Annotation
The record gives the reactivity of an RNA of 177 nucleotides to DMS and 2A3. For DMS the reverse transcriptase was MarathonRT.
RNA sequence: GGGAACGACUCGAGUAGAGUCGAAAAGGCAUCUAGGUGUUACUAAAGGCAUAUUGACAGGCUGUUUUAGUUUUGCCAAGAUGUUAUUUAUGCUUCCACUAGCUUACUUUAGUGAUUCAAAACUCGGCUAGAGUCUAAAGUUCGCUUUAGACUCUAGAAAAGAAACAACAACAACAAC
Reactivity to DMS in 0.01 (KOAc 150mM, MgCl2 10mM, bicine 150mM(pH8.5), 24C), signal-to-noise 5, nucleotides 027 to 126: g000g010c060a020u000c010u000a070g010g020u000g010u000u000a020c000u010a000a030a070g000g010c010a060u020a290u020u010g010a130c280a110g000g000c020u000g010u010u000u000u000a000g000u000u000u000u000g010c010c020a090a030g000a020u000g000u000u000a080u010u010u000a070u010g020c090u000u000c060c030a050c050u000a040g010c110u010u000a080c120u000u000u000a040g000u000g010a160u010u010c070a040a080a100a130c100u000c100g010g020
Reactivity to 2A3 in 0.01 (KOAc 150mM, MgCl2 10mM, bicine 150mM(pH8.5), 24C), signal-to-noise 4, nucleotides 027 to 126: g020g000c000a000u000c020u020a030g000g010u030g020u070u020a010c000u010a010a010a020g000g000c030a040u110a060u190u250g130a090c130a130g140g000c020u030g050u050u050u020u020a010g000u010u020u060u100g000c010c000a000a000g000a000u000g000u000u020a040u020u070u020a110u100g040c000u070u020c030c000a010c020u010a010g020c010u110u160a050c020u190u170u060a030g020u060g060a050u070u060c020a020a060a100a120c020u030c030g050g000